The record gives the reactivity of an RNA of 177 nucleotides to DMS and 2A3. 2A3 adducts were read by reverse transcription with SuperScript II with manganese. The RNA was probed in 150 mM KOAc, 10 mM MgCl2 and 150 mM bicine (pH 8.5) at 24 C.

RNA sequence: GGGAACGACUCGAGUAGAGUCGAAAAGAAAGAAACAUCACCCUAUGGAAAAGAAAGGCAGCCACACACGAAACCUGAGGAAACAGGAAGCCACAACGUGCGCCAUGUGGUUACCAAAGGGAGAAAACCGAUUUUAAAUGUUCGCAUUUAAAAUCGGAAAAGAAACAACAACAACAAC
Reactivity to DMS in 0.01 (KOAc 150mM, MgCl2 10mM, bicine 150mM(pH8.5), 24C), signal-to-noise 3, nucleotides 027 to 126: g020a070a040a150g000a090a080a050c080a080u010c070a150c050c020c000u020a090u020g020g000a220a040a110a040g000a060a050a110g010g000c070a090g030c080c010a000c010a120c120a080c070g010a090a110a080c000c010u000g000a170g030g060a060a150a130c040a060g000g000a060a090g030c080c020a020c060a100a050c150g000u010g000c230g000c030c040a110u030g030u000g000g010u000u000a080c010c000a050a060a050g010g000g000a120g000a040a030a090a070
Reactivity to 2A3 in 0.01 (KOAc 150mM, MgCl2 10mM, bicine 150mM(pH8.5), 24C), signal-to-noise 4, nucleotides 027 to 126: g070a030a100a000g100a020a050a010c060a070u080c050a060c020c000c000u040a090u080g060g030a090a040a040a050g140a070a050a020g060g020c010a000g000c020c000a020c000a000c000a010c040g070a060a040a010c000c000u040g010a050g060g230a120a030a010c000a010g000g030a070a000g040c060c010a040c020a120a040c100g060u070g020c050g000c030c010a010u070g030u010g040g000u040u050a050c000c010a010a030a000g050g000g020a030g040a040a040a010a020